[RMDB]
RNA sequence: GGGAACGACUCGAGUAGAGUCGAAAAUGGUGGUUGCACCUUGUUGGCCUGCCCGCUCCAAGUCGAGAGGUGGGCCAUGUGUCUUUAGUGAAAGCUAAGGUCUUGUGGUUCCUAGACAGGAGGGCAAAGCGUGAGGCUGGUGUCACAGAGCAGCGAAGGUCUAUAGUAGGUUCGCCUACUAUAGACCAAAAGAAACAACAACAACAAC
Reactivity to DMS in 0.01 (KOAc 150mM, MgCl2 10mM, bicine 150mM(pH8.5), 24C), signal-to-noise 1, nucleotides 027 to 156: u000g030g030u000g010g000u020u010g040c030a070c070c040u030u000g050u010u010g000g010c000c060u000g000c010c030c010g000c010u000c030c030a100a160g030u020c140g000a140g000a120g000g000u010g000g010g020c030c000a000u040g000u000g040u000c010u020u020u000a010g020u010g000a090a110a200g020c040u000a030a040g030g000u000c050u000u000g030u000g000g010u000u000c010c030u000a170g010a090c010a090g010g010a140g020g000g040c050a060a020a100g010c000g020u000g010a070g050g000c040u020g000g020u000g020u000c040a110c050a090g000a120g010c040a030g000c000g040a110a120
The record gives the reactivity of an RNA of 207 nucleotides to DMS. Conditions: 150 mM KOAc, 10 mM MgCl2 and 150 mM bicine (pH 8.5), 24 C.